[RMDB]
RNA sequence: GGGAACGACUCGAGUAGAGUCGAAAAGAAUUUUAGAAAAGCAAAGCCAUAAAAGCAGCACCCGAAAUGCUGAGGGCAAAUUUGGGGUUUAGGAGAAAACUGGAAGAGAAAAAGAAAAAGAAAAAGAAAUCCGAGUAUGAUUCGUCAUACUCGGAUUAAAAGAAACAACAACAACAAC
Reactivity to DMS in 0.01 (KOAc 150mM, MgCl2 10mM, bicine 150mM(pH8.5), 24C), signal-to-noise 1, nucleotides 027 to 126: g010a210a100u000u000u000u040a080g010a060a110a130a230g000c080a040a270a230g000c060c010a090u010a030a090a040a070g060c040a000g030c050a120c000c020c080g020a080a210a100u040g000c030u000g000a140g000g040g030c060a060a060a060u000u000u060g000g030g030g000u000u010u000a000g000g040a100g010a050a020a090a090c060u000g000g000a030a000g000a130g010a040a040a040a000a140g000a040a070a090a040a010g000a080a000a080a130a050g020a130